[RMDB]
RNA sequence: GGGAACGACUCGAGUAGAGUCGAAAAGAUAUGGACAUGCUCCCCACCCUUACUGUAACGCGACGAUCUAUGCUCCUCGGAAACGAGGAGCAUAGGGAGCGUGAGUAAGGAGGCAUGUCCUAAGUCACCCUAAGAAGUACUUCGGUACUUCUUAGGGAAAAGAAACAACAACAACAAC
Reactivity to DMS in 0.01 (KOAc 150mM, MgCl2 10mM, bicine 150mM(pH8.5), 24C), signal-to-noise 4, nucleotides 027 to 126: g020a050u010a080u000g010g000a010c010a010u000g010c010u000c190c060c020c040a300c140c000c000u000u010a020c000u000g040u010a130a020c010g000c000g000a100c300g000a060u010c000u000a010u000g010c000u000c000c010u000c000g020g000a040a030a090c000g010a000g020g000a000g000c000a000u000a000g000g000g010a020g020c000g020u000g000a020g020u000a000a000g000g000a040g020g010c000a000u000g000u000c000c000u000a000a060g010u010c050a200
Reactivity to 2A3 in 0.01 (KOAc 150mM, MgCl2 10mM, bicine 150mM(pH8.5), 24C), signal-to-noise 1, nucleotides 027 to 126: g090a040u160a150u210g000g000a000c000a000u000g040c030u200c060c050c020c050a050c030c000c000u000u040a000c000u070g160u300a200a020c000g030c010g130a300c030g010a150u000c000u020a010u000g000c010u000c010c000u030c000g030g030a030a070a030c000g020a010g000g000a000g010c010a000u010a000g010g000g000a010g010c040g010u010g010a020g000u000a010a000g010g000a000g000g000c000a000u030g000u020c000c000u030a010a020g020u030c050a150
Record summary:
This 177-nucleotide RNA was probed chemically with DMS and 2A3. The 2A3 profile rests on 4,244 reads. For DMS the reverse transcriptase was MarathonRT. Reactivities are given for positions 27 through 126.